[RMDB]
An RNA of 177 nucleotides, treated with DMS and 2A3 and read out base by base. Values are in units of 0.01, from 0 to 300, in steps of 10.
RNA sequence: GGGAACGACUCGAGUAGAGUCGAAAAGAGCGUUGGCGUAUAUCGCACUUCUGGCCAUGUCCUCGUUGUGGCUUAUUAGCGAAAUAUCGGUUGUCCCGGUACCGAGGAAUGCUAAUAUAUACGGAAAGGGUUAAUCUUACUUCGGUAGGAUUAACCCAAAAGAAACAACAACAACAAC
Reactivity to DMS in 0.01 (KOAc 150mM, MgCl2 10mM, bicine 150mM(pH8.5), 24C), signal-to-noise 7, nucleotides 027 to 126: g010a070g010c080g000u010u010g010g010c030g010u000a050u030a070u010c070g010c050a090c070u010u010c040u010g010g000c020c030a050u010g000u020c030c030u000c150g010u010u010g010u000g000g000c080u000u000a000u000u000a010g000c010g020a100a100a110u060a090u000c000g000g000u000u010g000u000c010c000c000g020g020u020a020c000c000g000a030g000g050a100a140u030g000c010u000a010a020u000a020u010a060u030a060c070g000g010a110a070a100
Reactivity to 2A3 in 0.01 (KOAc 150mM, MgCl2 10mM, bicine 150mM(pH8.5), 24C), signal-to-noise 9, nucleotides 027 to 126: g080a010g030c070g010u050u070g060g010c010g040u040a050u010a030u160c030g030c050a080c050u070u040c060u090g040g000c020c020a070u090g060u040c010c020u040c040g030u030u070g030u040g070g000c020u040u040a030u010u060a030g010c030g060a100a060a070u150a040u030c010g000g010u030u030g080u110c000c000c000g010g020u040a020c000c000g000a010g000g070a070a040u130g000c000u000a010a010u020a030u020a010u020a070c060g040g050a060a070a070
Conditions: 150 mM KOAc, 10 mM MgCl2 and 150 mM bicine (pH 8.5), 24 C. The 2A3 profile rests on 11,842 reads. For 2A3 the reverse transcriptase was SuperScript II with manganese.